Chemical mapping of a 177-nucleotide RNA with 2A3 and DMS. Values cover nucleotides 27 to 126. Conditions: 150 mM KOAc, 10 mM MgCl2 and 150 mM bicine (pH 8.5), 24 C. The 2A3 profile rests on 2,029 reads. Values are in units of 0.01, from 0 to 300, in steps of 10.
RNA sequence: GGGAACGACUCGAGUAGAGUCGAAAAGGCCACGACGGCCCUUUGGGUGGGGUUGCAGCCGUAGCGCAUCGCAAAGACGCCGAGGUCACCCACGCAACCCACAUCGCACGCUUGGUCACUCGGGGUCCCCCUAUUCCGUGUUCGCACGGAAUAGGGGAAAAGAAACAACAACAACAAC
Reactivity to 2A3 in 0.01 (KOAc 150mM, MgCl2 10mM, bicine 150mM(pH8.5), 24C), signal-to-noise 3, nucleotides 027 to 126: g000g000c000c010a030c090g130a030c060g010g020c000c010c010u120u170u090g080g000g000u010g030g020g000g020u040u050g000c030a030g040c010c030g050u110a040g000c040g000c090a060u040c000g030c130a120a120a010g040a010c030g000c020c010g000a010g000g030u090c060a070c010c050c000a020c020g000c010a020a040c000c090c000a040c000a040u080c030g030c070a020c030g020c050u040u060g020g000u050c020a010c050u000c000g000g000g000g000u010c010
Reactivity to DMS in 0.01 (KOAc 150mM, MgCl2 10mM, bicine 150mM(pH8.5), 24C), signal-to-noise 2, nucleotides 027 to 126: g030g050c000c000a000c110g000a080c170g000g000c030c000c030u000u020u050g000g010g070u000g030g080g000g000u000u030g000c020a070g000c000c030g000u000a100g000c190g040c000a130u000c120g020c220a060a150a120g000a030c110g040c000c000g000a100g000g000u000c190a100c110c130c040a200c170g000c000a000a000c000c000c000a170c100a060u000c120g040c040a130c090g020c060u070u000g000g010u030c030a040c060u000c000g020g000g000g010u000c000